This 177-nucleotide RNA was probed chemically with DMS and 2A3. The RNA was probed in 150 mM KOAc, 10 mM MgCl2 and 150 mM bicine (pH 8.5) at 24 C. The DMS profile rests on 1,787 reads.

[RMDB]
RNA sequence: GGGAACGACUCGAGUAGAGUCGAAAAAGGUCAGUUCGUAUGCUGCGGGAAAUGGCCGCCGAGGAGGUAGGGCUUACGCUUGCGUUUGUCUGUUAUAUCUUGGUGGACGAGUAGUCGCGGUUGGGACGAGAUCUACCAAGUUCGCUUGGUAGAUCUCAAAAGAAACAACAACAACAAC
Reactivity to DMS in 0.01 (KOAc 150mM, MgCl2 10mM, bicine 150mM(pH8.5), 24C), signal-to-noise 1, nucleotides 027 to 126: a090g000g010u010c080a130g020u000u010c030g010u010a090u020g040c010u010g020c020g040g020g000a060a120a150u000g010g000c000c100g030c000c020g010a020g000g020a070g000g020u010a110g020g000g020c010u010u010a010c060g010c030u000u010g010c030g020u000u000u020g010u000c020u000g010u010u000a040u000a030u000c020u000u000g010g020u000g000g000a020c030g020a140g020u000a090g000u010c030g020c040g000g000u000u010g010g020g000a030c070
Reactivity to 2A3 in 0.01 (KOAc 150mM, MgCl2 10mM, bicine 150mM(pH8.5), 24C), signal-to-noise 1, nucleotides 027 to 126: a000g030g030u130c030a000g000u050u040c030g000u060a030u120g010c000u010g000c000g000g020g060a040a110a050u170g060g000c010c010g000c000c000g010a010g020g000a030g000g090u120a000g040g000g000c000u000u000a000c010g000c010u080u080g020c000g020u000u000u000g000u000c010u020g230u230u040a160u010a020u060c010u030u000g010g000u010g020g010a040c010g030a020g030u040a010g020u080c010g000c000g000g050u050u030g060g030g020a010c020